[RMDB]
RNA sequence: GGGAACGACUCGAGUAGAGUCGAAAAUAACUCCAUCGAUCUCUAAUGAGAUCGAUGGAGGAUGAUGGAACUAGAGUCCGCCAUCACGACAUCUAGCAAGGAGUCGAGGAAAACUCGACUCCAAAAACAUAAAUACGCCGUUCGCGGCGUAUUUAUGAAAAGAAACAACAACAACAAC
Reactivity to DMS in 0.01 (KOAc 150mM, MgCl2 10mM, bicine 150mM(pH8.5), 24C), signal-to-noise 3, nucleotides 027 to 126: u020a060a210c010u010c000c000a000u010c000g010a010u000c000u010c000u030a230a190u090g000a020g040a000u000c000g000a000u000g000g000a000g000g000a030u030g000a030u030g000g010a130a060c020u050a120g010a150g000u000c020c030g000c030c020a060u010c060a080c140g000a100c190a070u030c080u010a080g000c190a110a060g000g000a020g020u000c000g000a020g010g000a110a050a080a200c000u000c000g000a000c010u000c010c010a000a000a060a050a130
Reactivity to 2A3 in 0.01 (KOAc 150mM, MgCl2 10mM, bicine 150mM(pH8.5), 24C), signal-to-noise 4, nucleotides 027 to 126: u120a030a020c010u000c000c010a010u000c010g000a000u000c000u030c040u250a270a130u300g010a020g000a000u000c000g000a000u000g010g000a010g010g000a000u050g000a010u000g010g050a060a020c020u030a060g010a020g190u060c040c020g050c030c030a070u070c020a020c050g070a050c010a140u090c040u070a030g100c070a270a160g010g000a010g010u020c000g000a020g000g070a040a130a070a130c000u010c000g000a000c000u000c000c000a000a000a000a000a000